Structure probing data (2A3 and DMS) for a 177-nucleotide construct. The 2A3 profile rests on 643 reads. The reactions ran in a buffer of 150 mM KOAc, 10 mM MgCl2 and 150 mM bicine (pH 8.5), at 24 C. It was measured as part of the RMDB library OK2TRN.

RNA sequence: GGGAACGACUCGAGUAGAGUCGAAAACAGGCUGAGCUCUAACCAGAUAACAUGUCCACGGAUUCUUGACAGAGAGAAAUAAGAUCACUUAGAAAGAAAGGAUCAUUUCUCCCUUGAGUCACAAGGAUGCUCCUAGAGUUUUCGAACUCUAGGAGCAAAAAGAAACAACAACAACAAC
Reactivity to 2A3 in 0.01 (KOAc 150mM, MgCl2 10mM, bicine 150mM(pH8.5), 24C), signal-to-noise 1, nucleotides 027 to 126: c020a010g040g050c010u130g030a020g000c030u020c040u130a000a030c000c030a030g030a240u090a030a030c030a050u170g030u110c060c020a030c010g080g000a100u000u000c000u050u040g030a050c030a100g090a020g010a010g080a140a000a020u170a080a000g010a030u040c020a220c300u030u090a030g170a230a180a000g130a090a050a000g040g020a000u020c000a020u000u020u000c000u000c000c000c000u020u020g040a040g030u050c030a040c000a300a000g060g000a000
Reactivity to DMS in 0.01 (KOAc 150mM, MgCl2 10mM, bicine 150mM(pH8.5), 24C), signal-to-noise 1, nucleotides 027 to 126: c140a100g040g040c030u000g030a160g000c050u000c050u000a130a080c060c050a040g000a130u000a010a080c050a070u000g000u000c000c040a120c300g010g000a100u060u020c010u000u000g020a080c090a080g000a070g000a030g000a000a000a000u020a100a040g000a000u000c040a070c010u000u000a060g030a200a120a100g030a060a060a010g010g000a030u000c000a080u000u000u000c020u000c000c030c040u010u010g000a050g000u000c060a040c240a030a170g000g010a040